[RMDB]
RNA sequence: GGGAACGACUCGAGUAGAGUCGAAAAUACGCGAGCUCGACCGUCGGCACGUGCGCGAAAUCGGUGAGGCCGACCUGUGUGAGCAGAUCCAUCGCGCGAUCGUCCAGCCGCUUGAGCAAACGCUCGAAUCAGCCAUUAAUUUCGAUUAAUGGCUGAUAAAAGAAACAACAACAACAAC
Reactivity to 2A3 in 0.01 (KOAc 150mM, MgCl2 10mM, bicine 150mM(pH8.5), 24C), signal-to-noise 6, nucleotides 027 to 126: u250a040c060g010c010g010a010g010c000u010c020g040a040c050c040g110u140c010g000g000c040a010c050g030u070g010c020g000c000g020a060a050a130u160c080g020g030u050g080a100g120g120c020c010g030a050c010c020u130g050u060g040u060g070a060g010c010a000g010a000u020c040c020a040u020c010g000c010g000c030g070a120u180c010g040u030c050c040a020g000c000c010g000c030u050u050g010a010g000c030a100a140a050c030g000c010u030c030g030a030
Reactivity to DMS in 0.01 (KOAc 150mM, MgCl2 10mM, bicine 150mM(pH8.5), 24C), signal-to-noise 9, nucleotides 027 to 126: u010a150c080g010c020g000a300g010c020u000c020g010a060c100c160g010u000c030g010g020c120a050c030g030u000g010c030g010c000g010a020a110a110u000c110g010g000u000g010a270g010g010c030c020g010a050c160c050u010g010u000g000u000g000a150g010c030a030g000a090u000c070c100a130u000c010g010c010g000c010g000a080u010c030g010u010c050c050a100g020c050c020g010c200u000u000g000a020g000c000a070a110a110c060g010c030u010c100g000a140